Chemical mapping of a 177-nucleotide RNA with DMS. Source: RMDB library OK2TRN, as collected in RNAgym. Reactivities are given for positions 27 through 126. For DMS, 1,464 sequencing reads were counted. The RNA was probed in 150 mM KOAc, 10 mM MgCl2 and 150 mM bicine (pH 8.5) at 24 C.
RNA sequence: GGGAACGACUCGAGUAGAGUCGAAAACAACCAGAGCCCCAAUAUAUGAGACAGAUAAAGGAGUAGUUUAUGGGCGUAAAUUGCUGAGUCUACGUAUAUAACAGGUACUUCUAAACCAUCAGUGAGAUCUCCCCUAAGUUUUCGAACUUAGGGGAGAAAAAGAAACAACAACAACAAC
Reactivity to DMS in 0.01 (KOAc 150mM, MgCl2 10mM, bicine 150mM(pH8.5), 24C), signal-to-noise 2, nucleotides 027 to 126: c110a110a100c040c050a100g010a120g000c040c020c030c050a150a110u010a060u010a030u010g010a110g010a070c030a060g000a080u020a060a110a110g010g030a040g020u010a030g000u000u000u000a030u010g000g030g020c040g000u000a010a030a030u000u000g010c070u000g010a050g010u000c010u000a070c050g020u000a070u000a050u000a050a070c170a070g020g010u000a000c090u030u010c110u000a080a040a070c070c060a070u000c090a080g000u010g010a150g000a140